[RMDB]
RNA sequence: GGGAACGACUCGAGUAGAGUCGAAAAGUAGUGCAGGCGCGAUCAGCGCACGGUACUACACGGCGCAGUACUAUGAGGCCUGAUAGUACAUGAGGCCGCGCGUCGCGUACGUCGUACCGUCAGCGAGGACCAAUUGCAUCUUCGGAUGCAAUUGGUCAAAAGAAACAACAACAACAAC
Reactivity to 2A3 in 0.01 (KOAc 150mM, MgCl2 10mM, bicine 150mM(pH8.5), 24C), signal-to-noise 3, nucleotides 027 to 126: g090u060a040g090u000g120c010a040g050g000c000g010c030g080a300u180c110a030g030c020g010c010a000c020g020g000u010a000c000u010a000c020a000c010g020g000c000g000c010a070g050u110a040c050u040a080u240g120a100g050g010c010c000u070g060a080u040a120g120u120a060c080a220u100g100a020g040g050c020c000g000c030g000c010g010u030c000g010c040g030u060a060c070g070u040c030g010u020a010c020c000g010u030c030a010g040c000g030a030g090
Reactivity to DMS in 0.01 (KOAc 150mM, MgCl2 10mM, bicine 150mM(pH8.5), 24C), signal-to-noise 3, nucleotides 027 to 126: g020u010a080g020u000g010c020a090g030g030c000g040c010g010a170u020c230a180g040c000g020c020a020c020g010g000u000a000c020u000a030c020a160c000g000g000c020g000c000a070g000u000a040c080u010a060u000g000a100g000g000c050c000u000g000a020u000a040g000u020a080c100a100u000g000a060g010g000c010c010g030c070g010c060g010u000c030g000c120g000u000a020c120g000u020c210g030u000a040c000c020g010u000c120a050g020c020g020a060g010
An RNA of 177 nucleotides, treated with 2A3 and DMS and read out base by base.
The DMS profile rests on 2,622 reads.
2A3 adducts were read by reverse transcription with SuperScript II with manganese.
The reactions ran in a buffer of 150 mM KOAc, 10 mM MgCl2 and 150 mM bicine (pH 8.5), at 24 C.